Chemical mapping of a 177-nucleotide RNA with DMS and 2A3. For 2A3 the reverse transcriptase was SuperScript II with manganese. The DMS profile rests on 1,232 reads. The reactions ran in a buffer of 150 mM KOAc, 10 mM MgCl2 and 150 mM bicine (pH 8.5), at 24 C.
RNA sequence: GGGAACGACUCGAGUAGAGUCGAAAACAGUCUGAAGCAUGUUACUGGACAAGAUGAAACGAGGAACAGCCUGUGCACUGUUUAGAGAGCCAACAAGGCUCACUUGAAUUAUGCCAGUUUUCAGAUGCACCUCGCAGAUUUUCGAAUCUGCGAGGUGAAAAGAAACAACAACAACAAC
Reactivity to DMS in 0.01 (KOAc 150mM, MgCl2 10mM, bicine 150mM(pH8.5), 24C), signal-to-noise 1, nucleotides 027 to 126: c090a080g000u030c070u090g000a050a080g000c300a160u000g030u040u090a000c000u000g050g000a210c000a040a290g050a000u000g030a000a020a190c070g000a000g000g000a000a070c030a000g000c070c030u000g000u000g060c000a170c000u000g000u000u000u000a070g000a050g020a100g000c000c000a170a290c300a240a220g000g000c050u010c000a010c000u020u030g020a040a140u000u020a000u000g000c000c010a040g000u000u000u000u000c040a000g000a000u000g000
Reactivity to 2A3 in 0.01 (KOAc 150mM, MgCl2 10mM, bicine 150mM(pH8.5), 24C), signal-to-noise 3, nucleotides 027 to 126: c030a000g030u020c010u020g040a020a030g050c110a160u140g060u170u170a060c020u030g010g010a050c030a030a050g030a070u120g080a040a060a000c060g010a000g040g050a060a010c020a040g020c010c030u300g090u150g000c040a010c030u000g000u000u000u010a080g070a000g010a000g030c020c000a010a120c040a300a000g010g000c000u000c000a010c000u030u040g020a000a050u090u030a030u070g020c000c020a000g000u130u000u000u000c020a030g000a020u060g020